[RMDB]
RNA sequence: GGGAACGACUCGAGUAGAGUCGAAAAGGGAGUAAAAGCUUACCAAGCUGGUUGUUACAAAUCAUGGGCAUAAGCUUCUAAUGAACAUAGUCUUUGCUGCCCUAGUAUAGUUGGCAUUCACACAGCAACUCCUCUACAGGUUCGCCUGUAGAGGAGUAAAAGAAACAACAACAACAAC
Reactivity to DMS in 0.01 (KOAc 150mM, MgCl2 10mM, bicine 150mM(pH8.5), 24C), signal-to-noise 2, nucleotides 027 to 126: g020g030g000a080g010u000a090a090a070a070g000c010u000u000a110c060c030a130a110g010c060u010g010g020u010u020g000u010u010a110c090a120a050a080u000c050a060u000g020g000g000c060a060u020a110a030g000c060u010u000c020u010a100a080u000g000a100a110c150a080u000a060g000u000c050u000u010u030g000c130u020g030c000c000c030u000a090g010u000a080u010a080g000u010u000g030g010c090a070u000u000c090a100c100a050c080a050g010c070a190